RNA sequence: GGGAACGACUCGAGUAGAGUCGAAAAUGGCAGUGCUUGCUGGUAAAGACACAGUUAUAAUUAAUGUAGAUGAUGGGCAGGAACCUAGGAAGGAAAGAUAAAGCCAACUUGUAAAGGGCCUCCUCAGUACCCUAACUUGAUUCGUCAAGUUAGGGUAAAAAGAAACAACAACAACAAC
Reactivity to 2A3 in 0.01 (KOAc 150mM, MgCl2 10mM, bicine 150mM(pH8.5), 24C), signal-to-noise 3, nucleotides 027 to 126: u050g000g000c000a010g010u020g090c040u040u050g010c030u060g000g080u100a090a060a000g060a010c050a010c030a110g040u030u100a130u080a210a140u190u070a090a050u130g090u100a050g000a130u050g020a030u020g010g030g020c010a010g070g000a020a010c000c000u030a050g050g010a040a020g010g030a060a060a050g070a040u130a100a060a010g050c020c000a010a040c050u050u070g050u090a070a100a020g010g000g040c010c010u010c000c000u010c030a020g050
Reactivity to DMS in 0.01 (KOAc 150mM, MgCl2 10mM, bicine 150mM(pH8.5), 24C), signal-to-noise 7, nucleotides 027 to 126: u010g010g010c030a050g010u000g000c050u000u000g010c050u000g010g010u000a060a080a080g000a110c090a030c050a080g010u010u000a100u010a080a120u020u010a090a070u010g010u000a060g010a100u010g000a090u000g010g010g020c070a060g000g010a060a070c040c030u000a080g010g010a060a100g010g010a050a040a070g000a100u000a060a070a130g000c020c030a040a110c080u010u010g010u010a030a090a090g000g000g000c020c020u000c070c010u000c070a090g010
Conditions: 150 mM KOAc, 10 mM MgCl2 and 150 mM bicine (pH 8.5), 24 C.
An RNA of 177 nucleotides, treated with 2A3 and DMS and read out base by base.
2A3 adducts were read by reverse transcription with SuperScript II with manganese.
DMS adducts were read by reverse transcription with MarathonRT.